RNA sequence: GGGAACGACUCGAGUAGAGUCGAAAAGACAAAUCCAGCAUAUUAGGCUAAGCAGGAAAGGGACGGUAGCUCCUGGUGUCAGUUCAUACGGUGUGAUGCAUCUGCGUCGUGCACACAUGCACCCAAACCCGUAAUGCUCUUUCGAGAGCAUUACGGGAAAAGAAACAACAACAACAAC
Reactivity to 2A3 in 0.01 (KOAc 150mM, MgCl2 10mM, bicine 150mM(pH8.5), 24C), signal-to-noise 1, nucleotides 027 to 126: g010a000c030a020a090a010u020c000c000a010g000c000a030u090a050u210u180a060g130g000c000u040a010a030g030c000a000g100g020a080a070a090g020g000g030a010c010g040g050u050a030g050c030u070c030c030u060g020g000u040g030u020c020a000g030u090u070c000a010u090a180c110g010g000u070g070u020g050a190u030g000c030a010u020c050u160g050c050g030u160c000g050u030g050c020a000c010a000c000a000u110g130c040a070c000c020c030a090a000a070
Reactivity to DMS in 0.01 (KOAc 150mM, MgCl2 10mM, bicine 150mM(pH8.5), 24C), signal-to-noise 1, nucleotides 027 to 126: g040a050c040a030a120a020u010c020c030a090g020c040a070u010a130u000u000a070g010g020c070u000a140a090g040c050a070g010g000a050a010a050g000g000g000a070c100g000g020u000a040g020c030u000c000c000u000g000g030u000g000u010c020a150g000u000u020c090a080u000a100c090g000g030u000g030u000g010a110u000g010c010a060u000c150u020g010c070g100u000c130g030u000g000c030a020c040a040c070a000u010g000c070a090c000c010c040a070a070a260
This 177-nucleotide RNA was probed chemically with 2A3 and DMS. It was measured as part of the RMDB library M2PK90. The 2A3 profile rests on 1,068 reads. For DMS the reverse transcriptase was MarathonRT. Reactivities are given for positions 27 through 126. For DMS, 774 sequencing reads were counted. Conditions: 150 mM KOAc, 10 mM MgCl2 and 150 mM bicine (pH 8.5), 24 C.